[RMDB]
RNA sequence: GGGAACGACUCGAGUAGAGUCGAAAACACAACAAUGGAUGACGCAUACGAAAGAUACACUUAGAAAAUUCAAAAUUUCUGAUGAAAGAAUUGAAGUCAUUCAAGGUGGUAGCGAUCGUAACGAUACGCGUGACUUGAUUUUCGAAUCAAGUCACGCAAAAGAAACAACAACAACAAC
Reactivity to 2A3 in 0.01 (KOAc 150mM, MgCl2 10mM, bicine 150mM(pH8.5), 24C), signal-to-noise 2, nucleotides 027 to 126: c100a000c010a090a000c000a080a040u160g000g080a050u140g100a030c040g020c110a060u070a070c090g030a100a080a000g030a000u130a000c030a030c040u030u050a070g080a040a180a040a020u060u050c080a020a090a050a110u070u000u030c040u110g290a300u100g050a000a060a000g050a020a080u080u020g040a030a000g060u160c040a060u010u030c000a020a040g150g010u060g060g040u110a060g060c010g010a080u020c000g000u030a140a100c020g000a080u170a150c130
Reactivity to DMS in 0.01 (KOAc 150mM, MgCl2 10mM, bicine 150mM(pH8.5), 24C), signal-to-noise 1, nucleotides 027 to 126: c050a180c150a190a050c240a010a120u000g030g000a070u080g000a000c050g000c100a070u000a000c000g000a010a110a190g020a060u000a020c110a050c080u000u000a100g000a000a000a000a030u000u040c050a010a060a110a220u000u010u010c070u050g080a150u000g040a050a020a000g000a080a180u000u090g000a040a030g000u050c160a050u010u000c000a040a030g000g100u000g000g050u000a000g000c050g010a240u000c030g000u000a000a030c040g000a040u040a010c050